An RNA of 177 nucleotides, treated with DMS and 2A3 and read out base by base.
The 2A3 profile rests on 5,631 reads.
For DMS, 8,998 sequencing reads were counted.
The reactions ran in a buffer of 150 mM KOAc, 10 mM MgCl2 and 150 mM bicine (pH 8.5), at 24 C.
2A3 adducts were read by reverse transcription with SuperScript II with manganese.
The data come from the RNA Mapping Database (RMDB), library OK2TST.
RNA sequence: GGGAACGACUCGAGUAGAGUCGAAAACAAAACUGGAACCAACCGCGGUUCUGAAUGGGUAAGCAAUUGCGUAUUUUGUAUUUCUUCCCCUCAAGCUGGUAUAGAAAUUUUCCAAAGAUAUAUCACGAAACAUUGGAUAAUUCGUUAUCCAAUGUUUAAAAGAAACAACAACAACAAC
Reactivity to DMS in 0.01 (KOAc 150mM, MgCl2 10mM, bicine 150mM(pH8.5), 24C), signal-to-noise 8, nucleotides 027 to 126: c080a070a050a110a110c200u010g010g000a030a040c020c020a090a110c300c230g020c180g010g010u000u000c010u000g010a120a080u010g000g000g020u000a030a050g000c090a080a050u000u010g030c030g010u010a070u000u000u000u000g000u000a070u000u000u000c050u000u000c030c010c010c090u000c120a050a090g010c090u000g010g010u000a030u000a030g000a060a090a120u000u000u000u000c050c050a070a080a080g000a140u000a020u000a030u000c030a060c140g010
Reactivity to 2A3 in 0.01 (KOAc 150mM, MgCl2 10mM, bicine 150mM(pH8.5), 24C), signal-to-noise 4, nucleotides 027 to 126: c020a010a090a010a030c100u130g010g020a000a000c000c010a030a040c100c130g120c200g070g000u030u010c010u010g020a060a090u120g010g030g000u050a020a010g000c020a050a130u130u090g030c050g040u150a220u050u190u110u160g020u020a070u010u110u010c010u010u020c020c000c000c000u020c010a040a040g030c090u020g010g020u020a030u000a040g060a020a120a050u070u050u050u020c030c000a050a030a010g020a000u040a000u010a010u080c030a010c070g030